[RMDB]
RNA sequence: GGGAACGACUCGAGUAGAGUCGAAAAUGGGGGUGCUGCUGACUGCGGGGGCAAUGAACAUCACAAUGCUUUUGUGUGGGAGGGUGCUACUAGGCAUCGCAGUUGCCUUUGCUUCGGUCUCUGUCACACGGUCUAGACUUUUCGAAGUCUAGACCGUAAAAGAAACAACAACAACAAC
Reactivity to DMS in 0.01 (KOAc 150mM, MgCl2 10mM, bicine 150mM(pH8.5), 24C), signal-to-noise 2, nucleotides 027 to 126: u020g020g010g010g020g030u000g000c020u000g000c080u010g000a050c050u000g010c110g020g000g030g000g010c010a050a030u000g020a130a120c140a070u020c030a060c070a040a050u000g010c190u000u000u000u000g010u000g030u000g000g030g020a100g020g000g020u000g000c010u000a080c150u010a070g000g000c000a000u000c070g010c070a180g000u000u000g000c010c000u000u000u000g000c050u000u000c080g000g000u000c020u000c050u010g010u010c040a080c120